RNA sequence: GGGAACGACUCGAGUAGAGUCGAAAACCCCAGCCAGGGAUUGUCCUCCUCGAGUCUCUUGAGAUUCUUGUUGACCUUCCGGAGCUCCCUCUCGAGUUCCUCCUUUCUUCUUCUUCCAUCGAUCCACCUAUAAUCAGUUCUUCGGAACUGAUUAUAGAAAAGAAACAACAACAACAAC
Reactivity to DMS in 0.01 (KOAc 150mM, MgCl2 10mM, bicine 150mM(pH8.5), 24C), signal-to-noise 2, nucleotides 027 to 126: c040c010c000c120a090g010c130c090a100g030g000g010a050u010u010g000u000c060c010u000c060c020u000c070g000a070g020u010c010u010c010u000u010g010a110g000a070u000u010c000u000u000g020u010u010g000a130c070c010u010u000c030c040g010g010a160g000c070u010c020c020c050u010c020u000c030g010a130g000u010u000c060c020u000c040c020u000u000u000c020u010u000c030u000u000c020u000u000c000c040a070u000c060g010a090u000c020c020a110c160
Reactivity to 2A3 in 0.01 (KOAc 150mM, MgCl2 10mM, bicine 150mM(pH8.5), 24C), signal-to-noise 1, nucleotides 027 to 126: c000c000c000c000a030g040c030c000a020g030g040g020a050u070u070g030u030c010c000u000c000c020u010c040g010a020g060u000c050u030c000u120u130g050a060g010a150u080u020c020u030u130g050u100u040g030a040c000c000u010u060c030c010g030g000a010g030c000u000c010c000c000u080c030u030c030g080a050g010u070u070c000c000u020c010c000u060u020u030c000u070u000c000u030u000c010u090u010c000c000a050u050c030g040a040u050c000c020a040c030